RNA sequence: GGGAACGACUCGAGUAGAGUCGAAAAUAAAGAAUAACAGGAAAUAAUAAAGGUCAAUAAAAAUAAAUAACCAAGACCAAGGAAUAAACCUGAAAAUAAAUAAAACAAAAACAAUAAACCGACGUUCGUGUUGGUAAAAGAAACAACAACAACAAC
Reactivity to 2A3 in 0.01 (KOAc 150mM, MgCl2 10mM, bicine 150mM(pH8.5), 24C), signal-to-noise 1, nucleotides 027 to 135: u020a020a070a000g060a060a060u180a050a050c000a000g000g020a240a010a000u060a010a020u020a060a090a030g010g000u010c010a030a040u200a180a090a000a000a000u230a080a040a040u130a020a010c010c000a000a050g010a000c010c030a010a010g040g070a090a020u060a140a060a010c000c000u070g080a010a050a100a020u130a010a010a000u050a120a080a000a020c050a050a130a000a000a000c020a000a020u080a140a030a000c030c010g010a000c000g010u020u080c030g030u090g000u060u010g000g000u110a080
Reactivity to DMS in 0.01 (KOAc 150mM, MgCl2 10mM, bicine 150mM(pH8.5), 24C), signal-to-noise 1, nucleotides 027 to 135: u030a020a100a090g010a130a000u000a040a290c000a010g000g000a050a090a020u000a070a060u000a040a130a250g000g000u000c010a070a050u000a030a010a070a030a120u010a050a050a060u010a020a100c090c130a040a070g000a010c000c000a040a100g000g030a080a050u010a040a080a040c000c000u000g010a040a050a000a050u020a040a050a010u050a040a040a070a030c080a010a090a060a070a120c070a040a050u000a010a050a080c070c010g000a090c120g000u050u040c100g000u030g000u000u010g000g000u000a040
Source: RMDB library P90LIB, as collected in RNAgym. The record gives the reactivity of an RNA of 155 nucleotides to 2A3 and DMS. Reactivities are given for positions 27 through 135. For 2A3 the reverse transcriptase was SuperScript II with manganese. The RNA was probed in 150 mM KOAc, 10 mM MgCl2 and 150 mM bicine (pH 8.5) at 24 C. For DMS the reverse transcriptase was MarathonRT. Values are in units of 0.01, from 0 to 300, in steps of 10.